[RMDB]
Record summary:
Structure probing data (2A3 and DMS) for a 177-nucleotide construct. 2A3 adducts were read by reverse transcription with SuperScript II with manganese. DMS adducts were read by reverse transcription with MarathonRT. The reactions ran in a buffer of 150 mM KOAc, 10 mM MgCl2 and 150 mM bicine (pH 8.5), at 24 C.
RNA sequence: GGGAACGACUCGAGUAGAGUCGAAAACGCGUACGAUCGCGAUGCGCUAAUUACGCGGCCGUACGAUGCCGCGGCAUUAUACGUAGCAUCGAUUAGCGCCGUAGCGCUAAUGCUAUACGGCAUCGCGGGGAGUGUGAGGGUUCGCCCUCACACUCCCAAAAGAAACAACAACAACAAC
Reactivity to 2A3 in 0.01 (KOAc 150mM, MgCl2 10mM, bicine 150mM(pH8.5), 24C), signal-to-noise 2, nucleotides 027 to 126: c040g010c050g070u100a060c040g070a130u150c070g000c010g030a040u060g020c050g000c050u020a010a100u140u050a070c010g020c000g000g000c010c010g070u060a020c050g030a080u100g000c000c000g000c080g000g010c050a050u050u100a100u090a150c050g080u010a000g000c000a020u050c030g110a170u000u090a000g010c000g000c030c060g220u140a060g000c000g030c020u010a000a010u010g020c030u020a040u030a080c070g020g000c010a010u070c000g000c040g000
Reactivity to DMS in 0.01 (KOAc 150mM, MgCl2 10mM, bicine 150mM(pH8.5), 24C), signal-to-noise 1, nucleotides 027 to 126: c110g020c030g000u000a070c070g010a060u000c030g000c020g000a130u020g010c000g010c130u000a060a120u040u000a180c030g000c010g030g030c000c010g000u030a050c220g010a060u000g010c010c010g020c000g000g130c120a060u010u000a020u000a130c170g000u000a070g000c050a070u020c190g000a060u000u000a040g000c000g040c000c300g000u010a090g000c010g080c080u000a020a000u000g000c080u000a030u020a130c060g010g020c030a070u000c000g010c070g060